Structure probing data (DMS and 2A3) for a 177-nucleotide construct. As a SHAPE reagent, 2A3 marks flexible, mostly unpaired nucleotides at the ribose 2'-OH. For DMS, 1,898 sequencing reads were counted. For DMS the reverse transcriptase was MarathonRT.
RNA sequence: GGGAACGACUCGAGUAGAGUCGAAAAUCAAGGACUACUGCUUCGCGCGCGAGGACCGCACGGUGGGGCUGGCCGUGCUGCAGCUGCGUGAGCUGGCCCAGCGCGGGAGCGCCGCCUGCUGGCUGCCCAGUUGCGUGAUGUUCGCAUCACGCAACUGAAAAGAAACAACAACAACAAC
Reactivity to DMS in 0.01 (KOAc 150mM, MgCl2 10mM, bicine 150mM(pH8.5), 24C), signal-to-noise 2, nucleotides 027 to 126: u010c080a120a070g000g000a080c050u000a070c130u000g000c050u010u000c030g030c050g020c060g020c030g030a180g020g010a140c050c070g010c040a040c110g000g020u000g010g000g010g000c010u000g010g000c030c010g020u000g000c020u010g000c150a100g000c030u000g010c030g010u010g000a140g000c010u000g020g010c030c250c000a050g020c000g000c010g000g000g000a050g010c020g010c020c060g000c010c020u000g000c030u010g050g010c070u010g000c060c080
Reactivity to 2A3 in 0.01 (KOAc 150mM, MgCl2 10mM, bicine 150mM(pH8.5), 24C), signal-to-noise 1, nucleotides 027 to 126: u120c060a090a110g080g000a010c040u130a050c010u230g030c000u070u100c070g010c000g000c010g000c000g200a080g090g060a080c000c000g000c060a050c130g000g020u060g030g040g030g000c010u010g070g070c000c020g000u010g000c040u050g000c000a030g050c030u120g050c020g090u120g110a110g020c000u030g080g040c020c050c000a010g000c070g010c000g000g010g000a030g000c010g030c000c000g030c000c000u000g010c040u030g040g000c040u040g020c020c010